Chemical mapping of a 207-nucleotide RNA with 2A3 and DMS. For DMS the reverse transcriptase was MarathonRT. Source: RMDB library M2RFPK, as collected in RNAgym. Conditions: 150 mM KOAc, 10 mM MgCl2 and 150 mM bicine (pH 8.5), 24 C. 2A3 adducts were read by reverse transcription with SuperScript II with manganese. The DMS profile rests on 1,932 reads. As a SHAPE reagent, 2A3 marks flexible, mostly unpaired nucleotides at the ribose 2'-OH.
[RMDB]
RNA sequence: GGGAACGACUCGAGUAGAGUCGAAAACCUACUCAAUACGUCCUCGUCGUACAGAACGGUAACAUGUUUUCCGAACAUCCGCACUUGGGUAUACGAGUAUACACCUUACCCAACCCUCGCCAACGGGAGUGCAUCCACGAGUUCGCUCGUGGAUGAACCACAAACACAACUUCGGUUGUGUUUGUGGAAAAGAAACAACAACAACAAC
Reactivity to 2A3 in 0.01 (KOAc 150mM, MgCl2 10mM, bicine 150mM(pH8.5), 24C), signal-to-noise 4, nucleotides 027 to 156: c010c010u030a040c030u040c050a050a100u080a120c040g050u040c020c020u020c040g050u010c020g040u070a050c030a100g080a170a030c000g030g010u060a060a060c070a150u140g090u020u040u060u060c030c000g000a030a020c010a060u020c020c020g050c030a060c050u040u060g000g040g000u030a020u030a060c050g030a030g040u030a010u050a060c050a050c050c000u030u110a060c000c020c020a040a080c010c000c020u050c060g100c070c010a080a070c050g020g040g000a040g020u060g000c000a000u000c000c000a000c000g010a000g010u060u080c190g050c090u000c000g010u000g010g000a000u010g000a000a000
Reactivity to DMS in 0.01 (KOAc 150mM, MgCl2 10mM, bicine 150mM(pH8.5), 24C), signal-to-noise 1, nucleotides 027 to 156: c020c030u010a010c040u020c020a100a190u000a080c000g010u000c000c010u000c000g020u000c110g050u000a130c030a070g020a120a170c050g000g030u000a030a050c030a160u000g010u000u000u000u010c010c070g000a110a120c040a080u010c010c000g000c000a050c080u010u020g000g010g010u000a070u000a080c130g020a060g050u000a110u000a040c120a090c040c000u010u000a070c040c010c020a090a040c020c000c040u000c000g030c030c110a050a100c040g000g000g000a160g010u020g030c000a000u020c000c000a000c000g010a000g020u010u010c300g010c010u020c000g000u010g010g000a010u010g010a030a100